[RMDB]
RNA sequence: GGGAACGACUCGAGUAGAGUCGAAAAUUAAAGAGCGUAGCACACACUCAGACUAAGUCUGACACACACAUACGCUAAUCAUCUCUGUGUGUGUUCGAGAUAUCGUUAAGUGUAUGAGAUGAAAAAACAGACGAACAAUGUUCGCAUUGUUCGUCUGAAAAGAAACAACAACAACAAC
Reactivity to 2A3 in 0.01 (KOAc 150mM, MgCl2 10mM, bicine 150mM(pH8.5), 24C), signal-to-noise 2, nucleotides 027 to 126: u210u090a090a040a020g110a010g000c010g000u020a010g000c030a010c000a000c000a000c020u030c030a040g020a030c030u180a300a140g080u000c000u010g010a020c000a010c010a000c000a010c000a030u020a030c010g020c040u050a020a040u010c000a010u000c000u000c000u030g000u000g000u010g000u000g010u040u010c020g070a020g000a050u150a100u250c040g030u030u040a050a020g010u000g020u000a030u050g010a020g010a000u000g000a070a010a000a010a010a010
Reactivity to DMS in 0.01 (KOAc 150mM, MgCl2 10mM, bicine 150mM(pH8.5), 24C), signal-to-noise 3, nucleotides 027 to 126: u000u010a050a130a040g010a170g010c000g020u000a020g020c180a100c140a020c010a010c050u000c070a080g010a020c030u010a080a150g010u000c000u000g010a040c000a000c000a000c010a000c000a020u000a010c030g000c010u010a090a120u000c010a020u000c000u000c040u010g000u000g000u000g010u000g000u000u020c170g010a020g010a100u010a080u000c040g020u010u010a080a040g010u000g010u010a030u000g010a020g020a010u020g000a000a030a050a070a060a110
An RNA of 177 nucleotides, treated with 2A3 and DMS and read out base by base. 2A3 adducts were read by reverse transcription with SuperScript II with manganese. Source: RMDB library M2PK90, as collected in RNAgym. For DMS the reverse transcriptase was MarathonRT.